[RMDB]
RNA sequence: GGGAACGACUCGAGUAGAGUCGAAAAAAAACCCGUAUCCUCAUGUAAAAAAUAGGGUGGGAAGUGGACUAUAUAGAUUCACUGAGAAUGAAGAUGAUCCAACUUGUGCCAAGCUUGACUAUGGUCAAAACGAAUUUAAGUUCGCUUAAAUUCGUUUAAAAGAAACAACAACAACAAC
Reactivity to DMS in 0.01 (KOAc 150mM, MgCl2 10mM, bicine 150mM(pH8.5), 24C), signal-to-noise 5, nucleotides 027 to 126: a070a050a090a080c000c000c000g020u010a050u010c010c020u010c100a060u000g020u010a000a040a080a070a090a060u000a060g010g010g030u010g000g000g000a100a050g010u000g000g000a040c030u000a090u010a100u010a080g010a100u000u000c020a040c060u010g010a130g010a090a070u000g000a070a060g000a080u010g000a070u000c030c030a040a060c070u000u000g020u000g010c020c030a030a120g000c090u000u000g010a050c040u000a070u010g020g010u010c080a040
Reactivity to 2A3 in 0.01 (KOAc 150mM, MgCl2 10mM, bicine 150mM(pH8.5), 24C), signal-to-noise 3, nucleotides 027 to 126: a000a010a030a040c030c000c010g030u040a120u050c000c020u000c030a090u080g020u250a090a050a020a100a120a160u110a120g000g030g010u040g020g050g010a080a000g010u030g030g010a000c010u040a020u060a040u080a300g160a230u030u010c010a020c060u040g000a020g080a130a100u140g020a040a050g040a040u050g020a010u000c050c010a050a060c080u050u060g020u050g030c000c040a030a010g040c040u050u070g050a070c010u080a120u220g050g000u030c010a000